[RMDB]
RNA sequence: GGGAACGACUCGAGUAGAGUCGAAAAGCUCGGAGACGAGCAAGGCUGACAAAACCCUGUCCCAACCUCCACGUGGUGUCGGCUGGAUAAUGCUGCAUUAUGUUGCAUUUAUCAACUGGGAACCAAAAGUAGGUCCCAGGUUCGCCUGGGACCUACUAAAAGAAACAACAACAACAAC
Reactivity to 2A3 in 0.01 (KOAc 150mM, MgCl2 10mM, bicine 150mM(pH8.5), 24C), signal-to-noise 1, nucleotides 027 to 126: g010c000u000c000g060g050a090g060a050c000g000a000g000c000a000a000g000g020c020u040g000a030c050a020a220a040a050c000c000c080u050g020u000c000c000c000a050a090c000c000u150c000c030a080c090g010u030g000g020u020g010u060c010g030g020c010u090g020g000a000u000a010a000u010g000c000u000g020c020a110u070u090a090u300g000u030u140g000c000a000u000u000u110a080u050c040a030a030c030u090g020g000g150a010a030c110c000a030a160a000